[RMDB]
RNA sequence: GGGAACGACUCGAGUAGAGUCGAAAAAGAGGAGGCAGCUGGAUAGCAGCGAGCAGGCGGUCCGCGCUGUACUCAACGUACGCAGAAAUAGCCUCCACGUCAAGUAUAUGACUGCCGCGCGGCGCGCGACCCGUAAACGAUUCGUCGUUUACGGGUCAAAAGAAACAACAACAACAAC
Reactivity to 2A3 in 0.01 (KOAc 150mM, MgCl2 10mM, bicine 150mM(pH8.5), 24C), signal-to-noise 4, nucleotides 027 to 126: a000g090a050g010g010a000g000g020c010a010g020c010u040g060g070a300u180a190g210c030a000g020c010g040a030g040c040a040g000g100c020g030g040u050c030c010g000c000g000c030u070g030u020a020c010u030c130a080a050c070g030u030a010c030g000c040a020g080a100a120a030u100a020g000c010c000u000c000c000a000c000g020u010c020a020a090g070u050a160u060a080u300g090a050c030u050g000c000c000g000c000g000c010g000g020c010g020c010g020c030
Reactivity to DMS in 0.01 (KOAc 150mM, MgCl2 10mM, bicine 150mM(pH8.5), 24C), signal-to-noise 5, nucleotides 027 to 126: a070g000a210g010g010a020g020g010c000a120g020c020u000g000g010a210u020a140g010c010a030g000c040g000a130g010c100a140g010g000c010g000g000u010c010c030g020c030g010c000u010g010u000a020c040u010c140a070a100c180g010u000a050c050g000c050a080g000a060a070a070u000a120g000c030c000u000c010c020a090c080g010u000c040a040a100g000u000a060u010a110u010g000a070c080u000g000c070c060g000c030g020c010g010g010c050g020c090g020c140